Record summary:
Chemical mapping of a 177-nucleotide RNA with 2A3 and DMS. For 2A3, 4,334 sequencing reads were counted. Source: RMDB libraries RFM100 and RFMREP, as collected in RNAgym.
[RMDB]
RNA sequence: GGGAACGACUCGAGUAGAGUCGAAAAGCUGCGUCACCAGGGGAUGACUGUCGGAAGAUGGUCAGUCCCGGGUGCAUAAGGAGUGGUGGAUGGUUCAGGACCGAAAGGUAGCAGACAAAAGCCACCGAUAUGCCGAAUAGUUCGCUAUUCGGCAUAUAAAAGAAACAACAACAACAAC
Reactivity to 2A3 in 0.01 (KOAc 150mM, MgCl2 10mM, bicine 150mM(pH8.5), 24C), signal-to-noise 4, nucleotides 027 to 126: g060c030u130g050c050g170u190c040a010c030c000a040g000g010g000g020a000u010g000a000c000u000g000u010c010g060g130a050a030g020a070u020g030g000u010c010a010g080u020c000c000c000g000g010g010u010g000c010a020u070a030a060g170g030a070g030u060g020g000u010g010g050a080u090g090g000u030u050c020a010g030g020a020c010c000g030a050a020a010g010g000u010a010g010c010a010g000a010c010a010a130a010a010g020c000c000a000c000c000g000
Reactivity to DMS in 0.01 (KOAc 150mM, MgCl2 10mM, bicine 150mM(pH8.5), 24C), signal-to-noise 5, nucleotides 027 to 126: g000c040u020g010c110g030u030c000a010c000c010a040g000g020g020g020a110u010g000a020c000u000g020u000c000g010g050a200a170g010a010u000g000g000u000c010a010g010u000c000c000c000g000g010g010u010g010c090a050u030a140a170g010g010a090g020u000g010g000u000g010g010a170u020g010g010u000u000c020a300g000g000a020c000c000g010a060a060a130g010g000u000a000g000c020a270g000a030c020a020a050a180a230g000c000c000a000c010c030g000

The RNA was probed in 150 mM KOAc, 10 mM MgCl2 and 150 mM bicine (pH 8.5) at 24 C.